Conditions: 150 mM KOAc, 10 mM MgCl2 and 150 mM bicine (pH 8.5), 24 C. Chemical mapping of a 177-nucleotide RNA with DMS and 2A3. The 2A3 profile rests on 179,191 reads. High DMS reactivity at an A or C suggests that its Watson-Crick edge is free. For DMS the reverse transcriptase was MarathonRT. Values cover nucleotides 27 to 126.
RNA sequence: GGGAACGACUCGAGUAGAGUCGAAAAGAUGAUAGCAACACAAUUUCUCAAUUGUGGACGACAGAAUUGAGAAAUUCUAGUGUUUCCUAUGACACUGAAGUGUAGGAACUUCGUCGUCGCUAUCAUACAUAGGUUACUGAUUCGUUGGUGAUCUAUGAAAAGAAACAACAACAACAAC
Reactivity to DMS in 0.01 (KOAc 150mM, MgCl2 10mM, bicine 150mM(pH8.5), 24C), signal-to-noise 9, nucleotides 027 to 126: g010a040u000g000a000u000a000g040c010a150a130c000a010c000a010a010u000u010u040c190u030c240a040a020u000u000g000u000g000g000a030c040g000a040c000a010g000a010a000u000u000g000a200g000a100a010a000u000u000c030u010a030g000u000g000u000u000u010c110c090u010a070u040g000a020c000a010c020u010g010a010a010g010u000g010u020a200g010g010a150a030c000u000u000c000g000u000c020g010u000c010g030c000u000a000u000c000a010u010a110
Reactivity to 2A3 in 0.01 (KOAc 150mM, MgCl2 10mM, bicine 150mM(pH8.5), 24C), signal-to-noise 9, nucleotides 027 to 126: g140a000u010g000a000u000a000g000c000a010a030c000a000c000a010a010u010u090u070c160u080c060a020a010u010u020g030u010g030g010a020c040g010a000c010a010g040a010a010u030u050g030a050g030a070a050a000u020u000c010u030a020g000u000g000u010u010u030c010c000u050a050u130g010a000c000a000c020u040g010a020a010g010u020g020u140a140g100g090a040a010c000u010u010c010g000u010c010g000u000c010g000c000u000a000u000c000a000u020a010